Record summary: An RNA of 207 nucleotides, treated with 2A3 and DMS and read out base by base. The reactions ran in a buffer of 150 mM KOAc, 10 mM MgCl2 and 150 mM bicine (pH 8.5), at 24 C. The data come from the RNA Mapping Database (RMDB), library RNAMAK. Reactivities are given for positions 27 through 156.
RNA sequence: GGGAACGACUCGAGUAGAGUCGAAAAACGCUGGGCGUAUCGACCGGUAAUACCUAAAUCGAGCUUGGCUGAAGCGCGCACGGCCAAGCUAAGACAGUUUAGGUGCCAGGUCGCCGAGCGCCUGUGCUGAAGCGCGCACGGCAACCGAAAGGUGCGACAAGAACUAUGUGUUCGCACAUAGUUCUUGAAAAGAAACAACAACAACAAC
Reactivity to 2A3 in 0.01 (KOAc 150mM, MgCl2 10mM, bicine 150mM(pH8.5), 24C), signal-to-noise 4, nucleotides 027 to 156: a000c020g000c010u040g000g000g000c020g010u060a090u160c010g030a000c010c010g050g010u140a180a090u100a150c010c000u020a020a010a020u090c040g020a010g010c000u000u000g010g000c000u010g020a150a030g010c000g000c000g000c010a020c020g000g000c000c000a000a000g000c000u000a010a000g010a000c010a030g000u000u010u010a010g000g000u030g030c080c050a050g000g010u010c010g000c030c060g130a120g020c000g000c000c000u040g010u030g010c000u030g010a110a040g000c000g000c010g020c020a000c010g010g000c010a030a040c010c010g040a090a030a010g030g010u020g000c000g020a040
Reactivity to DMS in 0.01 (KOAc 150mM, MgCl2 10mM, bicine 150mM(pH8.5), 24C), signal-to-noise 2, nucleotides 027 to 156: a030c030g040c040u010g010g000g030c040g040u000a110u010c010g000a080c020c010g060g010u000a140a090u000a060c010c030u000a000a030a040u000c010g030a040g000c010u000u010g000g050c010u020g020a050a030g000c050g030c020g010c060a300c040g000g000c000c000a060a020g040c020u000a020a050g020a050c300a020g020u000u000u000a010g010g140u000g020c070c070a200g040g010u000c060g030c080c070g000a140g010c010g040c000c000u000g020u010g010c030u000g020a030a030g030c030g040c000g000c000a280c010g040g000c010a090a060c000c000g000a070a110a130g000g030u010g000c000g020a200